This 207-nucleotide RNA was probed chemically with 2A3.
RNA sequence: GGGAACGACUCGAGUAGAGUCGAAAAGUUGAGUACCCUCAGGCCUGACAUACCUGGGUUCACCUCCUGGCUCGGCCCUUUCUCAUGCCCCUAAUCUUGGGCAAGUCACUGUAAUUUCGGUCCUCUGUGAAUCUGAGCUACCUCAUAGGGCUGUAUACCGGGAUUAUACUUUCGAGUAUAAUCCCGGAAAAGAAACAACAACAACAAC
Reactivity to 2A3 in 0.01 (KOAc 150mM, MgCl2 10mM, bicine 150mM(pH8.5), 24C), signal-to-noise 1, nucleotides 027 to 156: g030u060u060g030a020g010u150a140c000c040c020u020c010a000g030g020c030c010u160g070a070c040a040u130a010c000c000u040g060g000g000u050u040c030a040c000c040u020c000c020u060g060g000c020u020c020g010g000c010c010c010u010u070u000c020u020c020a110u050g070c010c000c000c000u060a110a080u290c020u120u090g040g020g020c060a120a000g010u000c030a000c100u070g030u110a000a220u010u150u140c000g010g000u020c030c030u170c020u080g010u010g040a150a060u010c070u010g010a040g030c020u050a090c000c020u040c000a000u060a000g000g010g080c030u200g050u270a110u060a030
Reactivities are given for positions 27 through 156. For 2A3 the reverse transcriptase was SuperScript II with manganese. Values are in units of 0.01, from 0 to 300, in steps of 10.